Structure probing data (2A3) for a 177-nucleotide construct.
RNA sequence: GGGAACGACUCGAGUAGAGUCGAAAAAUUGCCUGUGGCGGUGUUGGCUGGACGACCGAGUGUCGGCGGAUACCUCCGGGCAGCUUGUCUGCUUGCAUGCUCCCAUGGGCUGGCUCCUGCUUGCAGUACAAUCGUCUAAGUUCGCUUAGACGAUUGUAAAAGAAACAACAACAACAAC
Reactivity to 2A3 in 0.01 (KOAc 150mM, MgCl2 10mM, bicine 150mM(pH8.5), 24C), signal-to-noise 1, nucleotides 027 to 126: a030u110u010g030c030c000u120g050u240g060g040c040g000g000u000g000u040u010g180g050c090u110g090g030a020c040g020a070c060c090g080a100g050u290g020u000c010g030g010c000g010g000a000u040a050c030c040u040c020c060g010g000g010c000a010g010c010u090u080g020u050c020u010g030c010u010u060g000c020a050u100g010c000u000c030c010c000a040u130g030g030g000c040u020g070g020c020u030c010c000u000g050c000u000u040g020c010a020g040u010
Values cover nucleotides 27 to 126. Conditions: 150 mM KOAc, 10 mM MgCl2 and 150 mM bicine (pH 8.5), 24 C. It was measured as part of the RMDB library RFMREP.